[RMDB]
RNA sequence: GGGAACGACUCGAGUAGAGUCGAAAAAAGAGACGGUAGAAAAGAGCGAGCCUCCCAGUUUUCGAGUAGUCCCGGACCUAUCUAAAUUGGAGUCAUCCGACCGUAUGGAGAAAAUUUCCGACAAGAGCAGCUGGUAGCUUCGGCUACCAGAAAAGAAACAACAACAACAAC
Reactivity to DMS in 0.01 (KOAc 150mM, MgCl2 10mM, bicine 150mM(pH8.5), 24C), signal-to-noise 5, nucleotides 027 to 129: a020a030g010a040g000a050c100g020g100u020a040g020a110a060a040a090g010a110g010c060g000a110g030c040c040u020c040c030c050a170g060u000u000u000u010c040g010a000g040u040a010g020u030c000c050c000g010g020a060c000c000u030a090u070c090u030a020a050a150u050u040g000g000a050g070u020c080a000u000c060c040g020a050c080c000g000u010a050u040g030g030a020g050a060a020a060a130u060u060u010c020c030g030a130c150a080a060g000a050g040c000a100g010
Reactivity to 2A3 in 0.01 (KOAc 150mM, MgCl2 10mM, bicine 150mM(pH8.5), 24C), signal-to-noise 5, nucleotides 027 to 129: a040a000g090a010g000a020c020g000g040u060a010g140a060a030a010a010g070a020g040c060g010a000g020c000c000u000c000c030c000a030g000u010u000u050u090c020g020a050g030u060a010g020u010c000c000c000g020g010a050c030c000u040a070u120c060u120a100a120a090u080u090g040g000a020g030u070c010a010u040c040c030g010a030c010c000g040u020a070u150g060g000a050g050a020a040a010a080u100u040u000c020c000g060a060c030a090a030g010a010g050c020a000g020
Notes
Structure probing data (DMS and 2A3) for a 170-nucleotide construct. For 2A3 the reverse transcriptase was SuperScript II with manganese. Source: RMDB library 15KLIB, as collected in RNAgym. The reactions ran in a buffer of 150 mM KOAc, 10 mM MgCl2 and 150 mM bicine (pH 8.5), at 24 C.